[RMDB]
RNA sequence: GGGAACGACUCGAGUAGAGUCGAAAAGAUAUGGAACCAUGGAGCGAGUAUCGGAAACGAUAUAAUCGCUAUGAAGUGGAUUCCUAAGUCAAAGAGAACUAGAAAUCUUCGGAUUUCUAGUUCUCAACUAUUUCUAAUCCUUCGGGAUUAGAAAUAGAAAAGAAACAACAACAACAAC
Reactivity to DMS in 0.01 (KOAc 150mM, MgCl2 10mM, bicine 150mM(pH8.5), 24C), signal-to-noise 3, nucleotides 027 to 126: g010a040u000a200u000g000g000a000a060c070c000a010u010g000g010a000g030c000g010a020g000u000a000u000c000g010g000a030a060a090c010g020a010u000a010u000a110a160u000c010g020c000u000a130u010g010a090a240g010u000g000g020a170u010u000c010c000u000a010a090g010u000c020a090a120a120g010a020g010a000a010c000u000a000g000a020a010a010u000c000u000u010c210g020g000a010u000u000u000c000u000a000g000u000u000c000u000c000a010a120
Reactivity to 2A3 in 0.01 (KOAc 150mM, MgCl2 10mM, bicine 150mM(pH8.5), 24C), signal-to-noise 2, nucleotides 027 to 126: g010a000u030a020u060g000g000a000a020c010c000a000u010g000g000a050g030c000g000a000g010u000a000u020c000g000g010a010a010a010c000g010a010u000a010u030a100a230u060c010g000c000u080a300u030g010a010a010g000u040g010g080a300u000u040c000c010u000a020a010g020u010c010a000a220a010g010a000g000a000a010c000u000a000g000a010a010a020u030c030u090u080c230g000g000a000u000u000u030c000u000a000g010u000u000c000u000c000a010a000